[RMDB]
RNA sequence: GGGAACGACUCGAGUAGAGUCGAAAAUUAAAGGAGGCCGAGAAACCUUUUUAGAGAUAAGGAUACCGGCGCGCGCGCGCUGGCUGGCCUCCGCAUUGGAUAGGGUAGGUACACGCGCGCGAAAAAAGCAUAUAAUUAGUUUCGACUAAUUAUAUGCAAAAGAAACAACAACAACAAC
Reactivity to 2A3 in 0.01 (KOAc 150mM, MgCl2 10mM, bicine 150mM(pH8.5), 24C), signal-to-noise 2, nucleotides 027 to 126: u060u010a070a000a060g050g030a050g060g000c020c000g040a030g060a080a210a120c010c010u060u000u030u060u150a210g050a030g010a160u080a150a010g000g010a010u030a110c030c000g000g020c020g000c000g020c000g000c000g010c000g010c070u010g030g000c010u020g030g000c020c000u000c000c010g000c000a050u090u260g050g030a040u070a100g020g000g100u040a030g000g040u080a060c030a020c030g010c000g010c000g000c000g070a060a020a000a000a000a010
Reactivity to DMS in 0.01 (KOAc 150mM, MgCl2 10mM, bicine 150mM(pH8.5), 24C), signal-to-noise 2, nucleotides 027 to 126: u030u020a060a100a140g000g000a080g000g000c010c000g030a140g010a130a180a140c010c000u020u000u000u000u010a180g020a230g000a110u010a020a020g010g010a160u010a130c020c010g010g010c020g020c020g020c110g010c060g000c000g030c080u010g000g000c050u010g000g010c010c010u000c000c000g020c150a040u010u010g020g000a100u010a070g000g010g010u000a050g000g010u000a050c100a070c050g000c020g010c020g020c000g020a010a020a080a050a060a090
An RNA of 177 nucleotides, treated with 2A3 and DMS and read out base by base.
2A3 adducts were read by reverse transcription with SuperScript II with manganese.
Reactivities are rounded to 0.1 and cut off at 0 and 3.
DMS (dimethyl sulfate) methylates the pairing face of unpaired adenines and cytosines.
The reactions ran in a buffer of 150 mM KOAc, 10 mM MgCl2 and 150 mM bicine (pH 8.5), at 24 C.
The data come from the RNA Mapping Database (RMDB), library M2PK90.